[RMDB]
RNA sequence: GGGAACGACUCGAGUAGAGUCGAAAAAACUCUAGCGAGCCAAGAAAGGCCACGGUUCGCGCUGGGGUACGUUUUUACCCGUGGCUUUGCUACUCCAAGGACCGAAAGACUCAGAUUUGCAAAUUCAGAUACUACCAUGCUUCGGCAUGGUAGUAUCAAAAGAAACAACAACAACAAC
Reactivity to DMS in 0.01 (KOAc 150mM, MgCl2 10mM, bicine 150mM(pH8.5), 24C), signal-to-noise 2, nucleotides 027 to 126: a150a030c040u000c000u030a040g000c070g000a010g000c040c060a220a030g000a070a040a030g030g060c020c000a040c020g020g000u000u010c210g020c060g000c130u000g000g000g000g000u020a070c170g000u000u000u000u020u020a140c200c010c030g010u020g000g000c030u000u020u010g050c030u000a080c080u010c000c030a040a020g000g000a140c060c140g000a080a040a100g010a140c070u000c020a100g010a060u020u000u020g010c040a000a010a140u000u050c120a050
Reactivity to 2A3 in 0.01 (KOAc 150mM, MgCl2 10mM, bicine 150mM(pH8.5), 24C), signal-to-noise 2, nucleotides 027 to 126: a000a000c070u080c010u000a020g010c010g040a010g040c040c020a080a040g160a070a080a010g080g000c000c000a000c000g000g050u130u170c060g020c000g000c050u010g000g010g020g020u090a060c070g010u030u020u000u100u130a050c010c010c010g000u030g010g000c000u030u000u050g010c030u090a090c010u000c020c000a070a030g040g000a060c000c010g030a080a070a000g020a010c010u010c080a060g030a200u050u080u120g020c040a080a100a090u100u100c050a020
Annotation: Chemical mapping of a 177-nucleotide RNA with DMS and 2A3. For DMS the reverse transcriptase was MarathonRT. For 2A3 the reverse transcriptase was SuperScript II with manganese. The reactions ran in a buffer of 150 mM KOAc, 10 mM MgCl2 and 150 mM bicine (pH 8.5), at 24 C. The DMS profile rests on 1,785 reads. For 2A3, 1,973 sequencing reads were counted.